Overview:
Chemical mapping of a 170-nucleotide RNA with 2A3 and DMS.
RNA sequence: GGGAACGACUCGAGUAGAGUCGAAAAUACUGUCUGAUGACGGUGUCGUUUGCUAUAAUAGUGAUUAUGCAGCUAAGGGUUACAUUGCUGGAAUACAGAAUUUUAAGGAAACGCUGUAUUAUCAGAAUAAUCCCUGACUUCGGUCAGGGAAAAAGAAACAACAACAACAAC
Reactivity to 2A3 in 0.01 (KOAc 150mM, MgCl2 10mM, bicine 150mM(pH8.5), 24C), signal-to-noise 3, nucleotides 027 to 129: u090a000c000u000g000u010c030u090g110a200u230g020a040c000g000g080u030g050u060c050g000u000u030u070g050c040u040a000u030a300a010u000a100g070u000g000a000u020u020a000u080g000c030a000g050c020u030a000a040g090g010g000u050u040a070c000a060u050u100g110c040u040g000g130a000a000u050a090c000a010g010a050a050u070u030u210u100a100a060g120g000a110a030a010c140g000c000u000g000u000a020u000u000a040u010c010a000g000a040a010u060a000a000
Reactivity to DMS in 0.01 (KOAc 150mM, MgCl2 10mM, bicine 150mM(pH8.5), 24C), signal-to-noise 2, nucleotides 027 to 129: u030a050c030u000g030u010c040u000g020a120u020g020a040c060g000g000u010g030u000c070g020u000u040u040g020c030u000a110u030a000a000u040a060g030u030g030a190u000u000a060u020g050c070a040g030c080u020a070a110g020g060g000u030u050a090c200a040u030u000g020c030u000g010g040a020a060u030a000c000a000g000a020a070u000u000u000u000a140a130g110g030a050a060a080c300g030c020u000g010u010a020u020u040a070u000c050a020g010a070a040u040a100a090

The reactions ran in a buffer of 150 mM KOAc, 10 mM MgCl2 and 150 mM bicine (pH 8.5), at 24 C.
The 2A3 profile rests on 3,429 reads.
For 2A3 the reverse transcriptase was SuperScript II with manganese.
The DMS profile rests on 8,930 reads.